Structure probing data (DMS and 2A3) for a 177-nucleotide construct. For DMS, 9,011 sequencing reads were counted. The RNA was probed in 150 mM KOAc, 10 mM MgCl2 and 150 mM bicine (pH 8.5) at 24 C.
[RMDB]
RNA sequence: GGGAACGACUCGAGUAGAGUCGAAAAGACGCCUGUGUGGCGAAGCGAGCAUGAGAUGGAGCCGCAAGAGAAGAUGAGAUAGAAGCGGCGGGAUAGAUUGCUCGCGAAAAGAUCCAUCUCACAGAGAACCAUAAUACGGGUUCGCCCGUAUUAUGGUAAAAGAAACAACAACAACAAC
Reactivity to DMS in 0.01 (KOAc 150mM, MgCl2 10mM, bicine 150mM(pH8.5), 24C), signal-to-noise 5, nucleotides 027 to 126: g000a160c010g010c010c000u020g010u040g020u040g000g010c010g010a100a130g020c000g020a030g020c000a020u000g000a280g000a050u000g020g030a300g000c000c000g010c030a100a080g010a180g000a150a090g000a200u050g010a130g000a170u010a180g010a200a180g000c010g000g000c010g010g000g000a100u010a040g000a140u000u000g010c000u000c000g010c000g000a030a040a080a090g000a140u000c020c020a110u020c020u020c020a060c170a100g000a100g010a090
Reactivity to 2A3 in 0.01 (KOAc 150mM, MgCl2 10mM, bicine 150mM(pH8.5), 24C), signal-to-noise 7, nucleotides 027 to 126: g070a020c010g020c010c020u150g080u110g120u230g120g030c010g010a020a000g010c000g000a000g000c020a020u040g010a030g020a050u060g050g030a010g010c010c000g010c050a100a010g100a000g060a230a050g080a100u270g070a050g070a140u190a120g080a200a010g000c000g000g000c030g000g020g010a060u090a090g090a030u050u050g010c000u000c000g000c010g010a000a000a000a010g030a020u000c010c000a020u000c010u030c030a080c020a050g090a010g040a070
For 2A3, 8,871 sequencing reads were counted.